RNA sequence: GGGAACGACUCGAGUAGAGUCGAAAAAGGUGAAGUGCGAUUUUUUAGGCGAUCGCUCGCCGCGUGAAUUCAUGAUUCACAUUAGCGAAAAUUUCGUAAAGCCAACGUUAGGCAAAAAACAGUUUGGCAAAUUGCUUUGCGAUUCCGUCUUAACGUCCCACCACCUUAGAUUCGUCUAAGGUGGUGGAAAAGAAACAACAACAACAAC
Reactivity to 2A3 in 0.01 (KOAc 150mM, MgCl2 10mM, bicine 150mM(pH8.5), 24C), signal-to-noise 4, nucleotides 027 to 156: a010g100g010u090g040a110a030g070u080g040c040g020a060u000u030u010u030u100u250a060g010g000c030g000a020u020c060g040c090u030c010g030c020c010g050c010g000u000g000a000a020u100u120c110a090u300g160a040u040u000c000a020c000a030u100u140a030g030c010g110a010a060a070a100u090u110u040c010g010u050a040a040a010g000c020c020a020a000c040g000u020u050a050g060g050c000a100a080a010a000a000a020c040a030g030u070u050u060g040g020c000a010a050a170u090u040g000c020u080u050u020g010c010g050a040u090u010c040c020g050u000c080u040u140a090a050c040g100u090c010
Reactivity to DMS in 0.01 (KOAc 150mM, MgCl2 10mM, bicine 150mM(pH8.5), 24C), signal-to-noise 1, nucleotides 027 to 156: a010g020g040u000g000a140a140g000u000g020c000g000a030u000u000u000u000u000u060a180g030g020c050g000a050u010c070g030c180u010c040g040c010c010g050c240g000u000g000a020a030u000u050c190a160u010g000a160u010u000c010a050c000a120u000u000a070g030c060g000a020a060a060a100u050u000u020c030g060u030a070a050a280g000c000c000a020a040c040g000u000u010a050g060g000c120a000a040a100a060a020a050c030a070g010u020u000u010g000g000c020a100a020a070u000u000g000c030u000u000u000g000c000g020a190u000u000c060c010g020u000c030u020u020a050a040c040g000u000c050